[RMDB]
RNA sequence: GGGAACGACUCGAGUAGAGUCGAAAAUUUCAAAUAAGCUACAGACCAUUUUACAUACUAGAGUUGAUCAAACAAAAUCAUGGGCGACAACUGGUCAUAUUGAAGAGUUUUGUUCAGCACAUAUAAUUAAAACUGAUGGGGAGUACCACUUUUUACCCAUACAUGAUCUCUUCGGAGAUCAUGUAUGAAAAGAAACAACAACAACAAC
Reactivity to DMS in 0.01 (KOAc 150mM, MgCl2 10mM, bicine 150mM(pH8.5), 24C), signal-to-noise 1, nucleotides 027 to 156: u000u000u000c030a110a060a070u010a090a120g000c050u000a090c040a050g010a080c040c040a130u000u000u000u000a060c040a120u000a080c070u000a070g020a050g020u020u020g020a050u030c000a090a100a300c100a070a020a080a080u020c030a020u010g030g020g020c020g020a060c030a020a080c080u000g000g060u000c060a050u050a080u000u000g020a060a060g000a120g010u000u000u000u000g010u000u010c060a060g000c040a050c030a200u000a100u000a070a070u000u000a050a030a050a060c020u010g000a110u000g010g000g000g010a060g010u000a060c030c020a120c080u000u000u000u010u000a080c100c040
Reactivity to 2A3 in 0.01 (KOAc 150mM, MgCl2 10mM, bicine 150mM(pH8.5), 24C), signal-to-noise 3, nucleotides 027 to 156: u040u030u060c020a060a040a070u180a110a040g040c040u060a040c030a060g110a030c010c010a040u030u100u120u140a100c070a050u150a110c070u100a090g030a030g230u040u050g030a170u070c020a020a090a020c020a050a160a020a070u100c070a060u040g030g020g030c030g060a040c000a060a030c030u030g050g000u020c010a030u050a060u180u160g040a070a060g060a010g050u050u070u080u060g010u080u070c040a020g020c070a070c010a040u210a010u020a080a250u200u080a060a100a070a060c050u050g010a040u050g030g030g010g000a020g050u020a050c010c020a040c070u070u070u010u020u130a050c010c000